Structure probing data (2A3 and DMS) for a 207-nucleotide construct.
The 2A3 profile rests on 1,540 reads.
The data come from the RNA Mapping Database (RMDB), library ARCHII.
The RNA was probed in 150 mM KOAc, 10 mM MgCl2 and 150 mM bicine (pH 8.5) at 24 C.

RNA sequence: GGGAACGACUCGAGUAGAGUCGAAAACCUGUAGUCCCAGCUACUCGGGAGGCUGAGGCCGGAGGAUCGCUUGAGUCCAGGAGUUCUGGGCUGUCGUGCGCUAUGCCGAUCGGGUGUCCGCACUAAGUUCGGCAUCAAUAUGGUGACCUCCCGGGAGGAAGCACAAGUAGUUCGCUACUUGUGCUUCAAAAGAAACAACAACAACAAC
Reactivity to 2A3 in 0.01 (KOAc 150mM, MgCl2 10mM, bicine 150mM(pH8.5), 24C), signal-to-noise 2, nucleotides 027 to 156: c000c000u050g150u170a090g050u060c010c010c000a020g050c020u150a120c000u010c020g000g020g000a010g000g000c060u090g090a080g050g130c010c000g050g010a030g030g050a060u070c040g020c070u070u110g030a000g000u010c000c000a010g050g050a230g110u230u110c020u020g010g010g020c000u020g060u070c030g040u050g020c040g000c030u040a020u050g020c000c020g120a170u030c060g090g000g010u010g010u010c020c070g060c040a010c020u030a100a120g050u030u000c000g010g000c000a010u010c020a050a080u080a090u270g020g060u040g060a150c010c000u000c000c010c000g000g000g000a020g030
Reactivity to DMS in 0.01 (KOAc 150mM, MgCl2 10mM, bicine 150mM(pH8.5), 24C), signal-to-noise 2, nucleotides 027 to 156: c060c060u000g000u010a100g010u000c020c010c020a240g020c110u010a060c020u000c030g010g010g010a090g020g020c020u000g020a070g010g020c000c040g030g040a190g000g030a090u000c070g060c050u010u010g000a040g040u000c000c000a070g000g000a270g020u010u010c020u010g010g000g040c010u000g000u000c060g000u000g010c060g020c050u000a120u000g010c000c000g040a030u010c070g040g020g020u010g010u020c210c180g080c070a100c060u000a120a190g000u000u000c030g010g030c000a040u000c080a040a110u000a130u010g010g000u010g020a120c030c000u000c000c010c010g000g000g010a100g020